Record summary
This 170-nucleotide RNA was probed chemically with DMS and 2A3. The 2A3 profile rests on 24,198 reads. For DMS, 25,997 sequencing reads were counted. The reactions ran in a buffer of 150 mM KOAc, 10 mM MgCl2 and 150 mM bicine (pH 8.5), at 24 C.
RNA sequence: GGGAACGACUCGAGUAGAGUCGAAAAUGUUACUAAAGGCAUAUUGACAGGCUGUUUUAGUUUUGCCAAGAUGUUAUUUAUGCUUCCACUAGCUUACUUUAGUGAUUCAAAACUCGGCACCACAGAGAAGGGGGAAGAUUCGUCUUCCCCAAAAGAAACAACAACAACAAC
Reactivity to DMS in 0.01 (KOAc 150mM, MgCl2 10mM, bicine 150mM(pH8.5), 24C), signal-to-noise 6, nucleotides 027 to 129: u000g030u010u010a000c060u000a020a050a080g030g030c040a000u030a090u020u030g010a000c050a090g000g070c030u010g000u030u030u020u020a060g030u000u000u000u000g040c070c000a050a030g040a070u030g030u000u000a080u050u050u030a000u060g030c090u000u000c110c110a090c100u030a060g030c060u020u030a070c010u040u050u010a000g030u000g000a050u060u050c150a020a020a030a040c070u010c010g000g000c030a090c000c060a040c060a090g000a040g040a110a080g070
Reactivity to 2A3 in 0.01 (KOAc 150mM, MgCl2 10mM, bicine 150mM(pH8.5), 24C), signal-to-noise 9, nucleotides 027 to 129: u100g000u020u040a020c010u040a020a020a010g030g000c000a010u050a020u050u040g020a020c010a000g000g000c010u040g210u070u140u060u120a080g040u010u080u230u080g020c000c010a020a020g070a060u070g030u040u070a130u060u150u020a070u150g010c000u090u050c060c020a060c080u050a010g020c030u100u100a030c000u060u090u010a020g000u020g020a030u090u100c060a010a030a020a050c010u010c010g000g000c020a020c040c010a030c020a010g040a000g040a050a100g060